[RMDB]
RNA sequence: GGGAACGACUCGAGUAGAGUCGAAAAAGACCAGGUACGCCUGGUCACAACUUCCAGGUGAGUUUGAAAUUGAAAUGCGUAAAUUGUUUGGUACAAUUUAAAUUCGAUUUCUUAUUCAUAGGUGCAAAGAUAAAGUUCUAUUCGUAGAACUUUAUCUAAAAGAAACAACAACAACAAC
Reactivity to 2A3 in 0.01 (KOAc 150mM, MgCl2 10mM, bicine 150mM(pH8.5), 24C), signal-to-noise 9, nucleotides 027 to 126: a010g010a010c010c000a000g010g000u040a030c210g060c040c000u000g000g000u000c000a010c000a000a040c010u130u040c000c000a040g070g110u010g000a010g010u010u010u000g010a010a010a010u010u000g040a020a050a060u220g080c150g050u080a010a000a010u030u010g060u100u100u250g200g030u250a010c000a000a000u000u000u030a060a090a050u010u010c000g000a000u000u000u000c000u000u010a000u000u000c010a010u040a080g110g020u110g050c070a140a130
Reactivity to DMS in 0.01 (KOAc 150mM, MgCl2 10mM, bicine 150mM(pH8.5), 24C), signal-to-noise 6, nucleotides 027 to 126: a090g000a020c000c000a030g000g010u010a070c240g040c000c000u010g000g000u010c000a020c130a090a090c160u010u000c000c010a150g010g030u000g000a020g000u000u000u000g000a010a010a010u000u000g000a010a030a050u020g020c290g010u000a010a000a010u000u000g000u000u030u040g000g020u030a030c000a000a000u000u000u000a030a070a090u000u000c010g000a000u000u000u000c000u000u000a010u010u000c000a010u010a090g010g010u010g010c140a110a100